[RMDB]
RNA sequence: GGGAACGACUCGAGUAGAGUCGAAAAGUCGAAGUGGGGCGUACAACAAGGACGGUCCAAGGGCGAGUCGACCUCCCUCGGCACGAGGACGUGCCUGGUUUUGAGUGGGGGAGGAUGUUAUGGACAAAUUCCGUAACCAUAUGAGGCCUAAUUGAAGCCACAGUAUUAUCUUCGGAUAAUACUGUGGAAAAGAAACAACAACAACAAC
Reactivity to 2A3 in 0.01 (KOAc 150mM, MgCl2 10mM, bicine 150mM(pH8.5), 24C), signal-to-noise 3, nucleotides 027 to 156: g060u020c050g050a070a010g020u080g020g020g030g070c050g060u070a100c060a200a030c060a150a080g080g000a020c020g010g150u060c020c030a040a070g010g000g000c000g020a020g030u030c020g040a070c010c000u000c010c000c000u000c010g000g050c000a010c040g020a170g060g150a060c060g010u000g010c000c010u050g040g000u050u110u100u110g080a080g050u150g000g000g010g000g010a020g020g010a010u070g020u020u030a010u010g000g000a020c060a080a100a050u260u000c030c000g000u010a040a040c020c010a030u020a070u250g020a030g030g060c000c000u060a090a080u080u180g050a120a000g040
Reactivity to DMS in 0.01 (KOAc 150mM, MgCl2 10mM, bicine 150mM(pH8.5), 24C), signal-to-noise 2, nucleotides 027 to 156: g020u010c030g020a070a180g050u000g020g000g030g010c100g010u000a160c080a090a180c110a080a110g030g030a100c100g000g030u000c020c020a060a080g030g050g020c030g020a120g040u010c030g000a110c000c010u010c010c020c030u000c000g000g040c010a060c030g020a160g000g000a200c050g030u000g000c020c000u000g050g000u010u000u020u000g000a190g020u000g070g050g000g030g020a060g040g030a040u000g000u010u000a030u030g010g020a100c050a130a130a220u000u000c010c010g030u000a080a000c020c070a110u010a170u000g000a070g010g000c030c010u000a070a160u000u000g010a130a170g000
An RNA of 207 nucleotides, treated with 2A3 and DMS and read out base by base. For 2A3 the reverse transcriptase was SuperScript II with manganese. Conditions: 150 mM KOAc, 10 mM MgCl2 and 150 mM bicine (pH 8.5), 24 C. For DMS, 3,473 sequencing reads were counted. The data come from the RNA Mapping Database (RMDB), library VIROID.